[RMDB]
RNA sequence: GGGAACGACUCGAGUAGAGUCGAAAAUCCUAGUAUCUCAACCGAAAAGGGGAUAUAGUUCAACUGGUAGAGCACUGUAUUUUUCAUACAGCGAAAGGCACAAGACUUCGAACAUUAUAGCAGUUAGACCCCAUUUAUGUUUCGACAUAAAUGGGGUAAAAGAAACAACAACAACAAC
Reactivity to 2A3 in 0.01 (KOAc 150mM, MgCl2 10mM, bicine 150mM(pH8.5), 24C), signal-to-noise 3, nucleotides 027 to 126: u020c000c000u000a060g080u000a030u010c020u000c020a080a170c100c000g070a050a080a100a130g070g000g040g010a040u030a000u030a040g120u060u060c020a070a040c030u030g080g010u070a040g010a020g240c070a040c060u030g000u030a010u020u220u030u120u140c050a030u010a030c000a000g010c010g070a180a060a030g060g000c050a010c050a150a110g060a080c060u020u000c070g040a160a040c010a080u070u170a100u090a050g020c020a000g050u030u020a100g070
Reactivity to DMS in 0.01 (KOAc 150mM, MgCl2 10mM, bicine 150mM(pH8.5), 24C), signal-to-noise 6, nucleotides 027 to 126: u010c010c000u010a060g000u010a030u010c020u010c050a100a090c100c040g000a060a060a090a080g000g000g010g000a070u010a030u010a080g000u010u030c080a080a080c040u000g000g000u010a080g020a140g020c070a120c010u010g010u000a000u000u000u040u040u020c170a080u010a020c020a030g010c070g000a020a060a090g010g000c030a060c160a080a080g010a070c080u010u000c100g000a090a060c120a080u010u010a050u020a060g010c070a040g010u010u010a110g010
This 177-nucleotide RNA was probed chemically with 2A3 and DMS. For 2A3 the reverse transcriptase was SuperScript II with manganese. The RNA was probed in 150 mM KOAc, 10 mM MgCl2 and 150 mM bicine (pH 8.5) at 24 C. DMS (dimethyl sulfate) methylates the pairing face of unpaired adenines and cytosines.